An RNA of 177 nucleotides, treated with DMS and 2A3 and read out base by base. As a SHAPE reagent, 2A3 marks flexible, mostly unpaired nucleotides at the ribose 2'-OH. The data come from the RNA Mapping Database (RMDB), library OK1LIB. DMS adducts were read by reverse transcription with MarathonRT. The 2A3 profile rests on 2,090 reads. For DMS, 1,399 sequencing reads were counted.
RNA sequence: GGGAACGACUCGAGUAGAGUCGAAAAACACCGCGUCCAGCACCAGCGGAUCGGCCAGCGCCGCGGCCAGCGCGUCCUCAUCGUCAGAGUCGGCAUACCGGAAGCGCUCAUAGCUGACUUCGGCCAGGACGGUUCGAUUAUUCGUAAUCGAACCGUCAAAAGAAACAACAACAACAAC
Reactivity to DMS in 0.01 (KOAc 150mM, MgCl2 10mM, bicine 150mM(pH8.5), 24C), signal-to-noise 1, nucleotides 027 to 126: a070c130a150c020c050g000c060g040u010c030c000a070g040c060a020c140c040a080g040c160g020g000a140u000c030g000g000c160c010a120g020c140g060c020c030g080c140g040g000c060c060a120g020c050g000c010g000u020c000c000u000c060a100u000c070g030u000c050a090g000a030g020u000c040g040g000c060a050u070a160c070c090g020g000a020a080g040c010g030c040u020c040a060u040a070g000c020u020g000a000c020u000u000c020g060g000c120c100a140g000
Reactivity to 2A3 in 0.01 (KOAc 150mM, MgCl2 10mM, bicine 150mM(pH8.5), 24C), signal-to-noise 3, nucleotides 027 to 126: a000c090a030c000c020g000c030g020u030c010c010a030g030c010a040c020c000a020g030c030g070g010a070u060c060g020g020c040c010a070g010c020g000c010c010g050c020g010g030c010c000a030g000c010g000c000g070u050c010c000u060c030a150u060c050g080u010c030a040g000a030g090u020c010g030g010c010a040u060a090c020c020g100g060a090a040g000c020g000c010u020c080a140u090a100g000c010u000g020a030c000u030u030c070g030g000c010c010a030g090